[RMDB]
An RNA of 177 nucleotides, treated with DMS and 2A3 and read out base by base. The data come from the RNA Mapping Database (RMDB), library OK2TRN. Values cover nucleotides 27 to 126. For 2A3, 1,414 sequencing reads were counted. The RNA was probed in 150 mM KOAc, 10 mM MgCl2 and 150 mM bicine (pH 8.5) at 24 C. For DMS the reverse transcriptase was MarathonRT.

RNA sequence: GGGAACGACUCGAGUAGAGUCGAAAAGCAUAACACCCAGACAAACAACACUACGGAGGUGUUGAUGAGAACGUCGGUACUGCCAAGUAACGACCAUGGUACUCCAGAUCUGCUUGCAGAGAUGAAGUACUGACACCUUCUUCGGAAGGUGUCAGUAAAAAGAAACAACAACAACAAC
Reactivity to DMS in 0.01 (KOAc 150mM, MgCl2 10mM, bicine 150mM(pH8.5), 24C), signal-to-noise 3, nucleotides 027 to 126: g020c120a080u020a110a140c130a140c000c010c020a190g010a100c230a040a090a160c020a040a040c020a040c020u000a180c270g000g020a130g030g010u000g000u010u000g000a050u000g010a140g010a120a160c160g020u010c010g000g030u000a000c020u020g000c260c250a080a020g000u010a000a030c010g000a020c040c130a050u000g010g000u000a020c010u010c000c000a000g000a090u000c010u000g010c040u000u010g030c000a020g010a030g010a150u000g000a030a010g010
Reactivity to 2A3 in 0.01 (KOAc 150mM, MgCl2 10mM, bicine 150mM(pH8.5), 24C), signal-to-noise 2, nucleotides 027 to 126: g060c050a100u050a240a070c010a040c060c050c020a000g070a050c050a020a250a010c000a000a000c020a000c030u300a090c190g300g000a040g040g000u030g000u040u050g050a090u130g060a040g050a120a040c110g000u030c030g010g000u000a000c020u080g100c030c060a070a010g020u000a060a010c000g000a010c000c040a100u190g060g010u050a040c020u000c010c000a010g000a040u000c000u010g030c010u060u090g000c020a000g010a000g000a030u030g030a010a000g000